[RMDB]
Structure probing data (DMS and 2A3) for a 170-nucleotide construct. High 2A3 reactivity points to a flexible backbone, as in loops and unpaired stretches. For 2A3, 570 sequencing reads were counted. 2A3 adducts were read by reverse transcription with SuperScript II with manganese.
RNA sequence: GGGAACGACUCGAGUAGAGUCGAAAAAGUGCUUAAGGCUAUCUUAGUGAAGUAUGGUUGCUGUGAUGUUACCUACUUUGAAAAUAAACUCUGGUUUGAUUUUGUUGAAAAUCCCAGUGUUAUUGGUUAAGCCGACCCUUCGGGGUCGGCAAAAGAAACAACAACAACAAC
Reactivity to DMS in 0.01 (KOAc 150mM, MgCl2 10mM, bicine 150mM(pH8.5), 24C), signal-to-noise 1, nucleotides 027 to 129: a000g000u000g000c020u040u020a100a120g020g000c040u000a100u050c220u000u000a120g010u000g000a040a020g000u000a000u080g040g000u000u050g000c030u000g010u110g000a190u040g050u000u000a020c150c000u000a000c050u000u100u070g000a290a020a120a000u010a070a010a130c030u000c020u010g000g040u010u220u090g000a080u000u000u000u100g070u270u050g020a060a000a000a030u060c000c000c000a060g000u050g050u010u010a000u000u000g000g000u030u030a000a000
Reactivity to 2A3 in 0.01 (KOAc 150mM, MgCl2 10mM, bicine 150mM(pH8.5), 24C), signal-to-noise 1, nucleotides 027 to 129: a000g090u020g010c000u060u240a090a000g100g000c000u000a080u030c000u000u000a020g000u000g270a000a000g000u000a000u190g000g010u050u050g000c060u030g180u160g070a060u160g000u020u060a000c000c000u000a000c000u080u040u090g000a000a000a000a000u200a020a070a000c040u080c000u080g000g060u000u230u000g000a000u020u000u020u000g280u080u300g200a000a000a000a000u000c000c000c000a000g000u000g040u060u010a100u140u000g060g000u020u020a000a010